The data come from the RNA Mapping Database (RMDB), library M2RFPK.
An RNA of 207 nucleotides, treated with DMS and read out base by base.
Values are in units of 0.01, from 0 to 300, in steps of 10.
The reactions ran in a buffer of 150 mM KOAc, 10 mM MgCl2 and 150 mM bicine (pH 8.5), at 24 C.
RNA sequence: GGGAACGACUCGAGUAGAGUCGAAAAGGAAGUUCGUGCUUCCGUAGAACGCGAAAGUCGGACGGCGGCCAUGAGUCGCAACGCAAAGCCGCGGCAAGUGGAGUUAGCGAGAAGAGACUAGGCUUUGGAAAGUAGGCGGGCUUCGGCCCGCCUACAACAAUGAAGCAUGCUUCGGCAUGCUUCAUUGAAAAGAAACAACAACAACAAC
Reactivity to DMS in 0.01 (KOAc 150mM, MgCl2 10mM, bicine 150mM(pH8.5), 24C), signal-to-noise 1, nucleotides 027 to 156: g000g030a000a030g030u000u000c100g030u020g020c000u000u000c030c000g020u020a090g000a040a200c200g000c000g020a020a040a130g040u000c020g000g000a120c050g040g000c000g050g040c020c010a120u000g010a300g050u000c010g000c000a050a030c010g010c000a030a160a170g020c000c010g090c000g020g000c060a050a300g000u090g020g010a080g010u000u000a120g030c030g020a180g040a130a100g000a150g010a130c100u000a060g030g010c050u000u020u000g000g000a170a080a230g040u010a020g000g040c000g050g020g020c010u000u000c270g030g020c000c000c000g000c000c000u010a000c000a040a100